[RMDB]
RNA sequence: GGGAACGACUCGAGUAGAGUCGAAAAUAGGUUACGGAGACCUUCACUAAUAGAGGCAACACACUUAACGUCGAUUUUGCACGUAACUGCCCACCGCAGCAGCUCUACAAGUGAACAAAUAACGGAGGAAUGCUCCUCGGUUCGCCGAGGAGCAUUCAAAAGAAACAACAACAACAAC
Reactivity to 2A3 in 0.01 (KOAc 150mM, MgCl2 10mM, bicine 150mM(pH8.5), 24C), signal-to-noise 1, nucleotides 027 to 126: u300a000g000g000u070u080a060c200g000g070a070g020a010c060c000u000u010c090a100c100u070a170a080u070a190g010a000g050g180c000a070a040c030a000c040a150c150u190u060a100a010c130g150u000c040g180a150u000u000u000u220g020c000a000c080g150u070a240a130c000u000g000c000c000c000a060c000c150g000c000a040g030c000a060g000c040u040c000u040a000c000a000a010g000u000g020a010a010c000a120a250a070u300a000a000c010g000g000a020g000